Structure probing data (DMS and 2A3) for a 170-nucleotide construct.
It was measured as part of the RMDB library 15KLIB.
The DMS profile rests on 66,061 reads.
The RNA was probed in 150 mM KOAc, 10 mM MgCl2 and 150 mM bicine (pH 8.5) at 24 C.
The 2A3 profile rests on 45,525 reads.
[RMDB]
RNA sequence: GGGAACGACUCGAGUAGAGUCGAAAAACUGUUGAUUCCUCACAGGGUUCAGAAUACCAGUACGUUAUCUUCUGUCAAACAGCAGAUACGGCACAUGCUAACAACAUUAACAGAUUUAAUGUUGCAAUAACAUCUAGGUUCGCCUAGAUGAAAAGAAACAACAACAACAAC
Reactivity to DMS in 0.01 (KOAc 150mM, MgCl2 10mM, bicine 150mM(pH8.5), 24C), signal-to-noise 9, nucleotides 027 to 129: a030c090u020g010u010u010g030a090u000u000c030c040u010c120a090c100a090g000g000g000u010u010c100a100g030a110a050u010a080c130c050a020g030u040a010c010g010u030u020a000u030c030u010u000c020u030g020u020c190a120a070a270c020a000g010c030a020g000a030u010a010c030g030g000c100a040c080a020u040g000c100u050a090a250c060a030a030c000a010u000u000a010a020c160a160g010a170u060u010u020a000a000u030g000u000u000g000c120a070a030u000a070a130
Reactivity to 2A3 in 0.01 (KOAc 150mM, MgCl2 10mM, bicine 150mM(pH8.5), 24C), signal-to-noise 9, nucleotides 027 to 129: a000c040u030g040u070u070g050a110u120u080c010c000u060c010a060c040a060g040g010g000u080u100c040a030g050a130a050u090a140c020c010a010g030u070a070c020g050u110u070a010u020c000u020u000c000u030g110u100c070a110a140a140c010a090g010c000a000g000a010u010a000c000g010g010c030a030c010a110u140g050c030u100a140a020c010a000a000c000a020u010u030a030a020c040a100g190a250u080u070u050a020a010u010g000u000u020g010c010a010a050u080a130a030